[RMDB]
RNA sequence: GGGAACGACUCGAGUAGAGUCGAAAAGAAACUUCAAAGAUUGCGGCUAAUUGCUUCGGCCAACAUGUUACUAUAGCAUUAAUGUCGUACAAAGGUAUCAAUCAAGAGGAUGGAAUUAUCAUCAAAAAACAAUUUAUUCAGAGAGGCGGUCUCGAUAAUACUUUCCGAAGUUCGCUUCGGAAAGUAUAAAAGAAACAACAACAACAAC
Reactivity to 2A3 in 0.01 (KOAc 150mM, MgCl2 10mM, bicine 150mM(pH8.5), 24C), signal-to-noise 2, nucleotides 027 to 156: g020a010a030a000c020u080u070c090a030a110a060g030a130u010u090g050c040g010g000c030u060a110a060u070u040g040c050u090u040c000g000g000c000c010a030a030c040a040u060g020u080u020a060c060u120a070u160a090g040c020a000u090u050a050a060u120g020u030c060g010u030a020c030a070a070a020g040g010u040a030u200c020a070a020u050c020a090a020g010a010g070g010a020u060g000g080a080a070u060u220a030u090c010a000u000c050a030a000a130a130a030a040c020a040a020u080u140u060a170u140u210c030a030g020a000g000a030g090g030c040g030g020u000c000u000c000g010a020u060a100
Reactivity to DMS in 0.01 (KOAc 150mM, MgCl2 10mM, bicine 150mM(pH8.5), 24C), signal-to-noise 1, nucleotides 027 to 156: g060a120a080a140c020u000u000c020a270a120a130g060a100u000u000g000c050g000g090c130u010a070a210u020u000g000c010u000u000c060g030g030c000c060a050a290c100a030u020g080u010u000a070c010u000a180u020a060g000c010a040u020u010a120a080u000g030u000c050g050u000a140c050a000a100a060g040g080u010a020u000c100a030a180u000c040a030a050g020a080g030g000a060u010g040g010a060a090u030u000a080u000c080a100u000c050a020a030a030a040a040a030c050a020a080u000u000u000a070u010u000c000a100g000a180g010a050g000g020c030g040g010u000c010u000c020g000a060u000a100